[RMDB]
RNA sequence: GGGAACGACUCGAGUAGAGUCGAAAAGUGAGAACCUUCGACUAAGGUUCGAUUCGAGCGAAAGCGAGAGAGCGUUGCCACAGGCAACGGCCCGAAGGUGAGGAGCGAAGCGACGAAUAAUCCUUCCAUUAGCAGGACACUUCGGUGUCCUGCUAAUAAAAGAAACAACAACAACAAC
Reactivity to 2A3 in 0.01 (KOAc 150mM, MgCl2 10mM, bicine 150mM(pH8.5), 24C), signal-to-noise 1, nucleotides 027 to 126: g200u110g060a190g010a000a000c000c000u010u010c220g070a140c090u200a000a000g000g030u000u010c020g000a020u000u010c000g000a000g010c040g080a220a000a000g000c030g000a030g000a010g000a000g080c000g000u020u020g020c000c000a230c040a300g000g000c000a000a000c000g050g070c000c000c000g000a060a020g030g040u120g000a050g000g000a010g030c010g030a090a000g070c000g000a010c000g020a060a000u030a060a040u030c010c000u030u000c000c040
Reactivity to DMS in 0.01 (KOAc 150mM, MgCl2 10mM, bicine 150mM(pH8.5), 24C), signal-to-noise 2, nucleotides 027 to 126: g010u030g000a150g010a050a000c000c040u020u000c190g040a120c090u030a020a040g000g000u020u000c050g000a120u020u010c030g020a250g000c060g000a130a040a140g010c000g000a230g000a220g000a240g000c010g020u030u020g000c000c000a090c290a090g000g050c000a020a030c000g000g050c040c020c010g000a060a090g000g020u020g000a050g010g010a110g000c030g010a020a000g010c090g000a050c010g040a080a060u020a170a180u030c010c000u000u020c080c080
This 177-nucleotide RNA was probed chemically with 2A3 and DMS.
2A3 adducts were read by reverse transcription with SuperScript II with manganese.
The RNA was probed in 150 mM KOAc, 10 mM MgCl2 and 150 mM bicine (pH 8.5) at 24 C.
The 2A3 profile rests on 596 reads.